[RMDB]
RNA sequence: GGGAACGACUCGAGUAGAGUCGAAAAAUAAAGACACGUAUUGCUGUCAACAACAUAUCCAUUUCCAUCUAAUGUCAAGCUUCCACAAUCGAGUUGUUUAAAUAUAAUAUCGUCAACUGCGAUGGCGGUAUAGGAAUCUGGGUGCACUGUAAAUCGGGAAUAGGAAUACGUUCGCGUAUUCCUAUUCAAAAGAAACAACAACAACAAC
Reactivity to 2A3 in 0.01 (KOAc 150mM, MgCl2 10mM, bicine 150mM(pH8.5), 24C), signal-to-noise 4, nucleotides 027 to 156: a000u180a000a070a020g050a010c030a010c060g070u080a130u150u210g060c140u030g000u050c030a030a020c030a070a050c000a120u130a040u080c050c000a060u000u120u000c010c030a080u050c090u150a120a110u130g040u080c050a080a050g020c030u060u050c020c030a040c050a090a140u070c060g040a020g080u010u020g020u050u100u080a070a130a030u200a020u080a120a070u060a040u050c010g030u000c020a050a100c130u150g040c070g080a060u020g020g000c000g040g000u020a030u030a030g050g050a090a060u000c080u100g060g000g000u050g000c030a000c040u020g010u150a080a090a030u100c050g070g030
Reactivity to DMS in 0.01 (KOAc 150mM, MgCl2 10mM, bicine 150mM(pH8.5), 24C), signal-to-noise 3, nucleotides 027 to 156: a110u000a080a070a140g020a090c050a090c070g020u010a070u000u000g050c050u000g040u020c040a120a120c040a050a120c050a060u010a020u000c040c010a130u000u000u000c030c010a110u000c060u010a090a050u010g010u020c040a050a090g000c030u000u000c020c010a060c070a090a090u000c040g020a160g020u000u010g010u010u000u000a050a080a100u010a130u000a080a050u010a040u000c010g030u010c000a030a110c060u010g000c120g010a140u000g000g000c000g020g030u000a030u010a060g000g000a050a090u000c060u010g020g000g030u000g010c020a050c110u000g020u000a030a050a140u010c070g020g010